Structure probing data (DMS) for a 177-nucleotide construct.
The reactions ran in a buffer of 150 mM KOAc, 10 mM MgCl2 and 150 mM bicine (pH 8.5), at 24 C.
Reactivities are given for positions 27 through 126.
The DMS profile rests on 1,470 reads.

[RMDB]
RNA sequence: GGGAACGACUCGAGUAGAGUCGAAAAAACUCCAAACAUCUUACUAUUGUCAUUAACGGCCUUGGUACUAGGCGGAUGAAUUCAGGCACAAUUCCUCCAAGCUUGUUUGGGGGUUGGAUACCUGUUGAUAGGUAGUCACUUUCGAGUGACUACCUAUAAAAGAAACAACAACAACAAC
Reactivity to DMS in 0.01 (KOAc 150mM, MgCl2 10mM, bicine 150mM(pH8.5), 24C), signal-to-noise 2, nucleotides 027 to 126: a050a080c120u010c010c010a080a100a140c050a000u010c000u000u000a090c060u000a010u000u000g000u000c010a080u010u010a080a100c180g020g000c050c040u010u000g020g020u000a030c120u010a020g000g030c100g020g000a030u000g000a120a090u000u030c030a010g020g010c150a070c070a140a150u000u000c010c000u020c000c000a010a060g020c300u010u010g000u000u010u010g000g010g010g000g010u000u010g000g020a150u010a080c020c010u010g020u010u000g050